[RMDB]
This 207-nucleotide RNA was probed chemically with 2A3. For 2A3, 622 sequencing reads were counted. Conditions: 150 mM KOAc, 10 mM MgCl2 and 150 mM bicine (pH 8.5), 24 C. It was measured as part of the RMDB library M2RFPK.
RNA sequence: GGGAACGACUCGAGUAGAGUCGAAAACGACAAGGGUGUAAAGAGCGCUCUUUUACUCGGCAUGAUACCACCGUUAUCGGGUCAACAGAGUAGUUGCAAAUGACAACAAUGCUCAGGGUUAUGCUCUAAAAGUUCGUACCCUUCGGGGUACGAACAACGAAUUAACGAGCUUCGGCUCGUUAAUUCGAAAAGAAACAACAACAACAAC
Reactivity to 2A3 in 0.01 (KOAc 150mM, MgCl2 10mM, bicine 150mM(pH8.5), 24C), signal-to-noise 1, nucleotides 027 to 156: c080g130a010c130a060a030g080g000g020u120g050u150a070a090a010g120a020g000c000g000c000u060c060u030u040u040u040a080c090u050c000g000g010c020a030u150g020a030u040a070c040c000a010c050c000g080u070u060a050u180c060g000g010g000u020c000a020a000c100a050g000a010g030u080a020g010u000u000g000c010a060a150a300u240g120a170c000a040a000c000a000a170u090g020c000u000c000a000g000g040g050u070u100a060u140g010c010u030c010u070a010a080a000a130g000u000u000c000g000u000a000c000c000c000u000u000c210g020g000g000g020u000a000c000g000a000a000c000a000a000